[RMDB]
Source: RMDB library M2RFPK, as collected in RNAgym. Chemical mapping of a 207-nucleotide RNA with 2A3. The reactions ran in a buffer of 150 mM KOAc, 10 mM MgCl2 and 150 mM bicine (pH 8.5), at 24 C. Values are in units of 0.01, from 0 to 300, in steps of 10. For 2A3 the reverse transcriptase was SuperScript II with manganese.
RNA sequence: GGGAACGACUCGAGUAGAGUCGAAAAGUUGAGAGCGUUUAACUUGAGUCUUUUUUAUUAGCUUAAAAAAACUAUAUACAAGUGGUGGUAGUCCGCCACUCUAAGGGGACGCCUUUAGAAGAAGAGGGAAAGGCACUAAGCUUCGGCUUAGUGCCAACAAUUAUCCCUCGUUCGCGAGGGAUAAUUGAAAAGAAACAACAACAACAAC
Reactivity to 2A3 in 0.01 (KOAc 150mM, MgCl2 10mM, bicine 150mM(pH8.5), 24C), signal-to-noise 1, nucleotides 027 to 156: g040u040u070g020a020g010a020g160c020g000u080u130u180a090a010c020u070u080g000a010g040u100c020u160u170u050u010u010u000a100u060u170a140g050c010u000u080a000a030a000a030a000a020a060c100u100a190u030a030u100a250c080a150a000g030u000g050g000u000g000g000u100a100g140u060c000c010g010c020c010a000c000u000c000u010a020a000g000g000g030g040a000c020g070c000c010u050u140u130a030g010a090a000g010a040a030g060a080g000g020g000a060a110a140g020g010c000a000c000u000a000a000g020c000u000u090c270g030g010c000u000u030a000g000u000g000c000c000a000a000